[RMDB]
RNA sequence: GGGAACGACUCGAGUAGAGUCGAAAACUCGGAGGUCCCUCGAGGGGGUUCACAUCCCCAACCCGCGGGCCGGCUACUCUUCUUUCCCUUCUCUCGUCUUCUUCGGUCAACCUCCGAAGUUCCUCUUAACACGUAGUGUUCGCACUACGUAAAAGAAACAACAACAACAAC
Reactivity to 2A3 in 0.01 (KOAc 150mM, MgCl2 10mM, bicine 150mM(pH8.5), 24C), signal-to-noise 9, nucleotides 027 to 129: c010u000c010g010g010a020g010g020u070c020c020c000u030c030g050a150g010g020g000g010g010u100u110c070a040c020a130u110c010c000c000c000a020a030c010c010c010g030c030g010g020g010c020c000g000g000c000u050a070c020u020c000u100u020c000u020u060u040c010c000c000u070u020c030u000c010u010c020g090u010c030u110u000c000u050u040c050g030g010u040c030a050a040c020c010u000c000c000g010a020a010g010u010u010c010c000u040c020u090u090a100a040c060
Reactivity to DMS in 0.01 (KOAc 150mM, MgCl2 10mM, bicine 150mM(pH8.5), 24C), signal-to-noise 9, nucleotides 027 to 129: c040u010c030g010g010a050g010g010u020c030c030c010u040c030g040a180g030g020g000g000g000u030u030c170a030c180a120u040c000c000c000c000a140a110c050c030c000g030c090g000g000g010c000c040g040g000c040u000a040c050u040c040u030u020c020u000u020u020c000c020c060u020u020c040u030c020u000c050g040u030c050u010u010c050u030u030c030g020g000u030c090a070a070c070c040u010c000c010g020a030a050g000u000u040c030c020u020c090u060u050a100a110c190